[RMDB]
An RNA of 170 nucleotides, treated with DMS and 2A3 and read out base by base. Values cover nucleotides 27 to 129. The RNA was probed in 150 mM KOAc, 10 mM MgCl2 and 150 mM bicine (pH 8.5) at 24 C. Reactivities are rounded to 0.1 and cut off at 0 and 3.
RNA sequence: GGGAACGACUCGAGUAGAGUCGAAAAGGGGGGUCAUCUGGCAAAGAGAGGAGGAAUUUCGGAAGGAAUUCUCCCAAGAAGGUCCAAGAGAACUUUCAAGAAGGAGGAUUUUUCCCCAAGACGCUGGCAGGCCAUGACUUCGGUCAUGGCAAAAGAAACAACAACAACAAC
Reactivity to DMS in 0.01 (KOAc 150mM, MgCl2 10mM, bicine 150mM(pH8.5), 24C), signal-to-noise 4, nucleotides 027 to 129: g010g000g000g000g010g000u020c060a040u000c070u030g060g000c060a100a000a160g030a090g040a050g000g000a040g010g020a010a030u000u020u030c000g040g100a050a060g010g010a070a080u010u020c030u010c040c060c050a160a120g010a040a000g010g020u060c000c030a120a130g040a030g000a040a040c060u030u060u030c070a060a070g040a060a030g010g010a060g030g020a000u000u000u000u000u000c020c040c010c130a110a110g030a050c100g040c040u020g010g040c050a120g010
Reactivity to 2A3 in 0.01 (KOAc 150mM, MgCl2 10mM, bicine 150mM(pH8.5), 24C), signal-to-noise 3, nucleotides 027 to 129: g000g000g000g000g000g000u000c000a060u000c030u080g030g000c020a030a030a010g040a030g000a020g000g000a020g000g040a020a030u070u090u030c040g030g040a040a030g040g010a000a020u110u020c040u020c000c020c000a010a020g020a000a020g010g010u030c000c000a060a000g020a010g000a050a000c000u040u100u050c040a050a030g050a040a010g040g000a030g020g000a010u060u000u010u040u010c000c000c000c000a040a050g050a020c060g000c050u010g040g000c010a030g030